[RMDB]
RNA sequence: GGGAACGACUCGAGUAGAGUCGAAAAGAUAUGGAUGAUACCGCAGGACCUUGCCGAUAAGCCUGAUCUUUCGGAAACGAAAGCGUAGGCUUUUGACGGCGUACUAACUGCGGUAUCAUCCUAAGUCCUUAUUUAUACUGUUCGCAGUAUAAAUAAGAAAAGAAACAACAACAACAAC
Reactivity to DMS in 0.01 (KOAc 150mM, MgCl2 10mM, bicine 150mM(pH8.5), 24C), signal-to-noise 9, nucleotides 027 to 126: g020a120u000a280u000g000g010a010u000g000a010u000a000c010c000g000c000a020g000g000a150c300c110u000u000g010c000c000g020a170u000a030a010g000c010c000u000g000a080u010c000u000u000u000c000g010g000a130a090a230c010g010a010a000a020g010c280g020u000a020g000g000c000u000u000u010u000g010a220c100g000g000c000g000u000a010c040u000a110a280c000u010g000c000g000g000u000a000u000c000a000u000c000c000u000a020a080g010u000c040
The record gives the reactivity of an RNA of 177 nucleotides to DMS. DMS adducts were read by reverse transcription with MarathonRT. The RNA was probed in 150 mM KOAc, 10 mM MgCl2 and 150 mM bicine (pH 8.5) at 24 C.